An RNA of 177 nucleotides, treated with DMS and 2A3 and read out base by base. Conditions: 150 mM KOAc, 10 mM MgCl2 and 150 mM bicine (pH 8.5), 24 C. DMS adducts were read by reverse transcription with MarathonRT. It was measured as part of the RMDB library TTRDES.

[RMDB]
RNA sequence: GGGAACGACUCGAGUAGAGUCGAAAAAAAGAUAUGGACGCCGUGGCGCAUUUCCAGUGCUAAGACAGAUGCUUCGGAAACGAAGCAUUCGAGCACGGAGGAUUCAACACGUGCGUCCUAAGUCAAAGCAAUUAUCACUGUUCGCAGUGAUAAUUGCAAAAGAAACAACAACAACAAC
Reactivity to DMS in 0.01 (KOAc 150mM, MgCl2 10mM, bicine 150mM(pH8.5), 24C), signal-to-noise 2, nucleotides 027 to 126: a060a080a100g010a010u000a090u020g010g000a040c020g010c050c000g000u010g030g000c300g000c180a060u000u020u000c020c000a110g070u010g030c000u000a200a110g010a060c300a100g000a010u000g000c000u020u000c000g000g000a010a010a080c000g000a000a010g010c010a000u000u000c030g000a000g020c000a000c020g000g010a040g010g000a060u000u020c120a140a150c030a020c040g000u010g010c000g020u010c000c010u000a000a080g000u000c000a070a090a140
Reactivity to 2A3 in 0.01 (KOAc 150mM, MgCl2 10mM, bicine 150mM(pH8.5), 24C), signal-to-noise 1, nucleotides 027 to 126: a000a000a000g010a020u010a040u080g000g000a010c000g000c000c010g030u010g050g000c180g070c210a020u000u070u000c030c060a170g010u000g000c060u250a300a010g010a010c030a000g020a020u020g000c000u010u010c020g000g000a000a000a000c000g000a000a000g000c000a000u010u000c010g030a000g000c000a000c050g000g010a000g100g040a130u300u300c100a030a020c020a000c020g150u230g030c020g000u000c000c000u000a020a000g000u030c010a030a100a000